This 177-nucleotide RNA was probed chemically with DMS and 2A3.
The reactions ran in a buffer of 150 mM KOAc, 10 mM MgCl2 and 150 mM bicine (pH 8.5), at 24 C.
DMS adducts were read by reverse transcription with MarathonRT.
[RMDB]
RNA sequence: GGGAACGACUCGAGUAGAGUCGAAAAACGAUGUCGUUCGCGACAUCGUAAAUUGUAUAACCAUGCUUGAAGUCUACUUGGUUGUAAAGCGAGACAAGUCAGUGAGAGUCCUAUUCGUAGGACUCAAUACCAUAGGUGGUUUCGACCACCUAUGGUAAAAAGAAACAACAACAACAAC
Reactivity to DMS in 0.01 (KOAc 150mM, MgCl2 10mM, bicine 150mM(pH8.5), 24C), signal-to-noise 4, nucleotides 027 to 126: a020c010g010a010u010g020u000c000g020u000u010c220g010c000g010a010c000a000u000c000g000u000a020a040a070u000u020g010u000a080u000a110a170c030c030a100u010g010c030u010u000g000a110a140g010u000c010u000a090c020u000u010g010g030u000u000g000u010a070a040a030g010c120g010a050g010a130c050a040a090g010u010c090a060g000u010g010a220g000a010g010u000c000c000u010a020u000u010c170g030u000a000g010g000a010c000u000c000a050a070
Reactivity to 2A3 in 0.01 (KOAc 150mM, MgCl2 10mM, bicine 150mM(pH8.5), 24C), signal-to-noise 2, nucleotides 027 to 126: a000c000g000a010u000g000u000c000g020u040u080c210g000c000g110a010c010a000u000c000g010u000a010a000a000u090u070g070u020a080u000a090a020c040c030a020u100g010c030u060u050g070a140a050g050u030c000u000a020c010u080u050g120g020u080u070g040u160a040a040a020g060c100g070a000g000a040c020a090a070g110u100c090a020g030u040g200a160g010a000g090u000c010c000u000a020u020u090c220g040u050a010g000g000a000c000u000c000a000a010
Reactivities are given for positions 27 through 126. The DMS profile rests on 3,964 reads. For 2A3 the reverse transcriptase was SuperScript II with manganese.